[RMDB]
This 177-nucleotide RNA was probed chemically with 2A3 and DMS. Conditions: 150 mM KOAc, 10 mM MgCl2 and 150 mM bicine (pH 8.5), 24 C. As a SHAPE reagent, 2A3 marks flexible, mostly unpaired nucleotides at the ribose 2'-OH. Reactivities are rounded to 0.1 and cut off at 0 and 3. The 2A3 profile rests on 1,035 reads.
RNA sequence: GGGAACGACUCGAGUAGAGUCGAAAAGCUUCCCGGGGAUGAGCGUCUGGGAGAGCUGAUUCUGCAGACCGGCUAGGAGCCGCAGGGCGUUCUCCGGGGCGCGGCCCGAGACCGUCGCGUCGUAGACGAGCUUAUGCCACUUCGGUGGCAUAAGCUCAAAAGAAACAACAACAACAAC
Reactivity to 2A3 in 0.01 (KOAc 150mM, MgCl2 10mM, bicine 150mM(pH8.5), 24C), signal-to-noise 2, nucleotides 027 to 126: g030c100u080u000c000c000c000g000g010g010g010a280u210g020a060g020c000g090u010c000u110g070g040g030a040g000a000g000c020u020g010a300u120u000c020u040g010c000a060g030a120c010c000g020g070c100u170a140g120g100a040g100c010c000g020c020a030g000g030g000c030g000u020u000c000u000c000c000g000g010g000g000c000g000c010g000g000c000c000c000g000a020g000a030c030c010g080u070c010g030c040g070u020c010g000u070a030g010a070c040
Reactivity to DMS in 0.01 (KOAc 150mM, MgCl2 10mM, bicine 150mM(pH8.5), 24C), signal-to-noise 1, nucleotides 027 to 126: g020c190u030u000c000c020c050g030g000g000g000a040u050g000a070g000c040g000u010c040u000g030g000g000a000g000a020g000c010u000g040a050u010u000c000u050g090c020a090g000a060c050c030g030g030c240u060a160g040g010a300g030c050c020g000c040a000g000g000g020c000g000u050u010c000u000c000c010g000g000g060g000c040g010c000g000g000c000c020c000g000a210g000a130c000c060g000u000c190g060c040g010u000c050g000u000a110g080a280c250